[RMDB]
Chemical mapping of a 177-nucleotide RNA with DMS and 2A3. The reactions ran in a buffer of 150 mM KOAc, 10 mM MgCl2 and 150 mM bicine (pH 8.5), at 24 C. The 2A3 profile rests on 1,961 reads. 2A3 adducts were read by reverse transcription with SuperScript II with manganese.
RNA sequence: GGGAACGACUCGAGUAGAGUCGAAAAGGCUCGAAAGCACCUACCAUCCAAUAACUCUCUCUCUCUCAAUAAGGAUGGUAGGGAGAGGUGCAGAGAGAGAAAUAAAAGAAAGAGCCGAAAAGAAAAAGGGUAUACAAUACUUCGGUAUUGUAUACCCAAAAGAAACAACAACAACAAC
Reactivity to DMS in 0.01 (KOAc 150mM, MgCl2 10mM, bicine 150mM(pH8.5), 24C), signal-to-noise 2, nucleotides 027 to 126: g000g020c000u000c000g000a120a200a100g050c050a090c040c010u000a040c000c000a000u000c000c000a280a040u040a090a100c090u010c010u000c100u050c000u000c030u000c000u000c020a100a190u040a060a050g000g000a030u000g010g000u000a030g010g000g020a060g060a120g030g000u020g000c020a050g050a010g000a010g010a000g000a090a090a090u040a080a090a090a130g000a030a040a200g010a010g000c000c000g020a020a060a110a120g020a020a120a070a060a110
Reactivity to 2A3 in 0.01 (KOAc 150mM, MgCl2 10mM, bicine 150mM(pH8.5), 24C), signal-to-noise 2, nucleotides 027 to 126: g030g010c000u000c000g120a230a050a060g030c040a010c000c000u000a040c000c000a000u000c000c010a200a190u060a120a110c000u010c040u000c000u030c000u000c000u010c000u090c030a040a060u130a130a040g010g000a000u000g000g010u010a000g000g000g000a020g010a020g010g000u070g010c040a020g020a000g000a000g000a000g040a080a000a060u000a010a060a000a010g160a040a080a000g000a020g000c010c020g070a040a000a020a030g090a010a110a010a040a030